[RMDB]
RNA sequence: GGGAACGACUCGAGUAGAGUCGAAAAGAUAUGGAGCGGUCCCAGGACAAUGAUGUAGCUCGGAAACGAGCUAUUGAGUCCAGGACACGCUCCUAAGUCAAAACACACUGUCUUCGGACAGUGUGAACUUUUAUCACCCGUUCGCGGGUGAUAAAAGAAAAGAAACAACAACAACAAC
Reactivity to 2A3 in 0.01 (KOAc 150mM, MgCl2 10mM, bicine 150mM(pH8.5), 24C), signal-to-noise 1, nucleotides 027 to 126: g030a020u050a050u240g000g010a020g020c030g000g050u000c010c020c060a130g030g010a030c040a100a300u190g030a000u070g090u030a000g000c010u000c000g000g000a040a090a030c010g000a020g000c000u010a010u010u050g010a000g010u000c030c000a010g000g030a030c030a070c240g010c000u000c000c010u010a030a020g000u020c020a000a000a150a140c020a000c000a000c000u000g000u000c010u050u130c280g250g010a020c030a000g000u000g000u000g000a000a000
Reactivity to DMS in 0.01 (KOAc 150mM, MgCl2 10mM, bicine 150mM(pH8.5), 24C), signal-to-noise 2, nucleotides 027 to 126: g000a090u020a300u010g000g000a020g020c000g040g000u010c000c010c110a240g010g000a030c000a250a230u000g000a170u000g000u000a000g000c020u000c020g000g010a050a130a180c000g020a030g020c000u000a000u000u000g000a110g000u000c000c000a300g000g000a030c000a090c000g000c000u000c000c020u000a000a100g000u000c040a100a080a200a200c000a000c000a000c010u000g000u000c000u000u030c300g000g000a020c000a010g010u000g000u000g000a010a080